This 177-nucleotide RNA was probed chemically with DMS and 2A3. It was measured as part of the RMDB library OK2TRN. Reactivities are given for positions 27 through 126. The reactions ran in a buffer of 150 mM KOAc, 10 mM MgCl2 and 150 mM bicine (pH 8.5), at 24 C. DMS adducts were read by reverse transcription with MarathonRT. 2A3 adducts were read by reverse transcription with SuperScript II with manganese.

[RMDB]
RNA sequence: GGGAACGACUCGAGUAGAGUCGAAAACAGUCAACGUGAAGGCGGGCCAGACCAUCGCCGCAUUCUACCAGAGCACCGUCAUGAUCUUUGGCACGAUGGCUCGCUACAUGCAGAGAGUUAGGGAAAAACGAGUACUGAUCUUCGGAUCAGUACUCGUAAAAGAAACAACAACAACAAC
Reactivity to DMS in 0.01 (KOAc 150mM, MgCl2 10mM, bicine 150mM(pH8.5), 24C), signal-to-noise 2, nucleotides 027 to 126: c090a140g000u030c090a110a180c060g010u000g010a150a120g020g010c000g000g000g000c020c040a050g020a110c110c070a110u000c050g010c070c040g000c030a030u000u000c040u000a170c030c020a100g000a060g060c100a040c060c060g000u000c090a060u010g000a040u010c020u010u000u000g000g050c030a080c110g010a110u000g000g000c000u000c050g000c010u000a020c080a020u010g000c050a090g000a060g020a050g000u000u000a020g020g000g000a070a060a110a050
Reactivity to 2A3 in 0.01 (KOAc 150mM, MgCl2 10mM, bicine 150mM(pH8.5), 24C), signal-to-noise 1, nucleotides 027 to 126: c020a000g190u060c050a000a010c070g020u060g080a110a080g070g000c000g000g050g020c040c030a030g020a080c000c040a060u100c060g000c070c040g030c020a030u100u000c040u060a050c010c020a030g000a020g020c010a050c090c010g180u110c000a080u210g090a100u030c050u130u060u080g010g010c030a010c120g130a080u000g030g000c000u020c000g000c010u000a040c020a020u070g030c060a000g040a000g010a040g090u030u060a010g060g000g040a040a090a010a000